This 207-nucleotide RNA was probed chemically with 2A3 and DMS. The reactions ran in a buffer of 150 mM KOAc, 10 mM MgCl2 and 150 mM bicine (pH 8.5), at 24 C. Reactivities are given for positions 27 through 156.
[RMDB]
RNA sequence: GGGAACGACUCGAGUAGAGUCGAAAAACUAUUGAUUCAAGUAUACAGCAAAUUCAGUUAGAUGAAAGGUCUAGAUGGGGAGGAGAACUACAUACAAGCUUAGUAACAUCUGUUAUGAAUUGUACUAAACAUUUUAAUUCAGAUAGAUGUUUAGUGAGCAUAAGAUACGCUUCGGCGUAUCUUAUGCAAAAGAAACAACAACAACAAC
Reactivity to 2A3 in 0.01 (KOAc 150mM, MgCl2 10mM, bicine 150mM(pH8.5), 24C), signal-to-noise 2, nucleotides 027 to 156: a000c120u160a180u110u080g110a030u110u070c030a010a040g020u050a080u070a150c110a050g070c050a070a050a050u040u190c010a030g060u070u110a030g010a120u050g080a110a030a000g080g010u020c070u060a020g000a050u100g000g000g040g000a000g010g040a020g080a050a050c020u060a030c020a070u070a030c040a100a000g000c010u080u170a000g020u080a070a000c010a010u000c020u040g020u060u100a240u140g020a040a050u030u010g020u020a030c020u140a040a080a070c030a010u070u100u030u190a030a090u020u040c000a000g030a060u060a050g020a020u010g000u020u020u000a020g000u020g050a010
Reactivity to DMS in 0.01 (KOAc 150mM, MgCl2 10mM, bicine 150mM(pH8.5), 24C), signal-to-noise 1, nucleotides 027 to 156: a090c030u000a110u000u010g010a200u000u000c030a060a120g000u000a130u000a140c030a100g060c060a060a040a130u010u010c070a050g010u000u020a100g010a080u010g040a050a050a040g010g000u000c090u000a030g020a060u000g020g020g010g020a060g060g010a090g010a040a060c000u010a100c080a110u000a140c010a030a110g000c020u000u000a090g010u000a060a080c030a030u000c060u000g000u000u020a080u000g020a040a100u000u000g020u000a090c030u000a030a010a000c090a040u010u000u010u000a050a240u000u000c090a040g000a090u020a010g030a010u000g000u000u010u010a040g000u000g010a210